[RMDB]
Structure probing data (2A3 and DMS) for a 177-nucleotide construct. The data come from the RNA Mapping Database (RMDB), library TTRDES. The RNA was probed in 150 mM KOAc, 10 mM MgCl2 and 150 mM bicine (pH 8.5) at 24 C. Reactivities are given for positions 27 through 126. The DMS profile rests on 950 reads.
RNA sequence: GGGAACGACUCGAGUAGAGUCGAAAAGAUAUGGAACUCCUUGUACGAGCUACGGUCGGAAACGACCGAAUAGCGAUGAGUAUGGGAGUUCCUAAGUCAAACCACUCUGUCUUCGGACAGAGUGGAAUCUCGGUACAAUCUUCGGAUUGUACCGAGAAAAAGAAACAACAACAACAAC
Reactivity to 2A3 in 0.01 (KOAc 150mM, MgCl2 10mM, bicine 150mM(pH8.5), 24C), signal-to-noise 1, nucleotides 027 to 126: g000a010u020a010u060g010g000a030a000c010u000c010c010u120u300g100u140a110c240g300a100g000c050u050a020c000g010g020u000c000g000g000a070a030a000c010g000a020c000c000g010a050a060u030a000g040c020g250a300u300g300a090g000u030a010u010g000g010g000a000g040u000u000c000c000u000a010a010g000u010c010a000a100a140c010c000a000c010u020c010u000g000u010c000u060u090c280g130g010a000c000a010g000a000g010u010g010g040a000a010
Reactivity to DMS in 0.01 (KOAc 150mM, MgCl2 10mM, bicine 150mM(pH8.5), 24C), signal-to-noise 1, nucleotides 027 to 126: g000a020u000a120u010g030g030a030a000c010u000c000c010u010u010g070u010a010c040g040a170g000c090u000a010c000g000g020u000c010g030g000a050a030a010c000g010a030c010c000g010a030a070u010a030g020c030g010a190u000g010a160g010u010a030u010g000g000g020a030g020u000u000c000c000u010a000a050g000u000c000a190a260a290c000c000a000c000u000c000u000g000u000c000u000u010c300g060g020a010c000a000g000a000g010u010g000g010a020a040